Description: This 177-nucleotide RNA was probed chemically with 2A3. The reactions ran in a buffer of 150 mM KOAc, 10 mM MgCl2 and 150 mM bicine (pH 8.5), at 24 C. Reactivities are rounded to 0.1 and cut off at 0 and 3. It was measured as part of the RMDB library OK1LIB. 2A3 adducts were read by reverse transcription with SuperScript II with manganese.

[RMDB]
RNA sequence: GGGAACGACUCGAGUAGAGUCGAAAACACAGCCGCUGAUGCUGCUCGUCCUCGCAGCGAAGCACACGGCGUCCACGGUGCACGCACCACAGUCCAACACCGUCACGGGCACCCCAAUAUUGAGGACGACGGCGGAUAGUUUCGACUAUCCGCCGUCAAAAGAAACAACAACAACAAC
Reactivity to 2A3 in 0.01 (KOAc 150mM, MgCl2 10mM, bicine 150mM(pH8.5), 24C), signal-to-noise 2, nucleotides 027 to 126: c100a000c000a000g030c000c010g010c040u030g020a110u200g010c080u020g000c030u050c000g050u040c000c000u000c000g000c020a010g000c070g020a020a020g080c020a000c020a000c050g030g000c020g040u010c020c000a060c030g020g070u020g040c030a040c120g030c000a040c020c040a030c020a020g070u110c020c020a040a040c000a030c020c000g050u000c000a030c070g040g000g000c010a000c040c000c000c000a040a000u110a050u180u200g020a030g010g010a000c030